[RMDB]
RNA sequence: GGGAACGACUCGAGUAGAGUCGAAAACGGCGGCCGCGCGGCGCACGUCGGCCGCGAGCUGCGCAUAGCGCACGCGCCGCCGCGGCUCGGCGAUCGCGAUGCCGUCGGGCCGCUGCGCGGCGGCGGAGCCGUAAUUACUCUUCGGAGUAAUUACGGCAAAAGAAACAACAACAACAAC
Reactivity to 2A3 in 0.01 (KOAc 150mM, MgCl2 10mM, bicine 150mM(pH8.5), 24C), signal-to-noise 1, nucleotides 027 to 126: c010g050g010c030g050g000c000c000g070c000g020c000g070g000c090g010c100a030c020g110u100c030g020g000c010c040g000c000g000a030g010c030u070g000c030g010c080a180u180a190g110c030g030c060a010c070g050c010g020c010c030g000c000c010g000c000g030g030c040u040c020g000g000c010g050a060u050c070g000c050g150a090u150g060c030c020g000u020c000g000g010g000c000c030g000c010u020g000c100g010c030g000g020c000g030g000c050g000g030a050
Reactivity to DMS in 0.01 (KOAc 150mM, MgCl2 10mM, bicine 150mM(pH8.5), 24C), signal-to-noise 2, nucleotides 027 to 126: c100g040g010c010g010g010c000c030g000c060g040c000g010g020c050g030c090a120c050g010u000c060g000g000c010c010g000c010g010a020g070c060u000g000c020g000c060a160u020a110g030c080g020c050a060c070g010c010g010c060c030g010c020c020g020c000g020g000c030u000c000g030g020c000g010a120u000c060g000c110g010a100u020g020c070c000g010u000c050g000g010g020c020c030g000c000u000g010c080g000c010g000g000c000g000g000c010g000g000a130
Structure probing data (2A3 and DMS) for a 177-nucleotide construct. The RNA was probed in 150 mM KOAc, 10 mM MgCl2 and 150 mM bicine (pH 8.5) at 24 C.